[RMDB]
Conditions: 150 mM KOAc, 10 mM MgCl2 and 150 mM bicine (pH 8.5), 24 C. An RNA of 177 nucleotides, treated with DMS and 2A3 and read out base by base. DMS adducts were read by reverse transcription with MarathonRT. 2A3 adducts were read by reverse transcription with SuperScript II with manganese.
RNA sequence: GGGAACGACUCGAGUAGAGUCGAAAAUUGAUGGUAGCGAUCCCCUUUUCCAGCCGGUCUGGUGCCGCAUCAUGCAAAAGCACGUUAUAUCCGGCCAGAGCGCAUACAUGGGCGAUGCCGCUGCCCAAUAUCGAUAGCGUUUCGACGCUAUCGAUAUAAAAGAAACAACAACAACAAC
Reactivity to DMS in 0.01 (KOAc 150mM, MgCl2 10mM, bicine 150mM(pH8.5), 24C), signal-to-noise 4, nucleotides 027 to 126: u000u010g010a140u010g030g020u000a020g040c000g010a100u000c000c010c000c060u010u000u000u010c060c100a160g010c100c010g000g000u000c150u010g020g030u010g000c020c090g000c080a120u010c120a070u000g030c040a070a070a160a180g000c020a000c000g030u000u000a100u020a110u020c120c010g010g010c010c030a010g010a010g010c180g020c150a080u010a070c200a090u010g000g000g010c170g000a050u000g000c220c050g010c020u000g020c010c010c150a060
Reactivity to 2A3 in 0.01 (KOAc 150mM, MgCl2 10mM, bicine 150mM(pH8.5), 24C), signal-to-noise 2, nucleotides 027 to 126: u070u050g030a030u120g010g000u010a000g000c000g000a010u030c030c000c000c000u000u030u150u060c020c030a040g030c030c010g020g120u100c080u090g070g020u030g020c080c010g020c060a080u140c020a040u170g000c020a100a180a070a000g010c000a000c040g040u000u030a170u020a020u210c020c020g000g000c000c000a030g010a000g000c060g020c090a020u050a150c120a120u050g020g000g040c190g040a020u030g060c000c040g000c010u010g000c040c020c000a030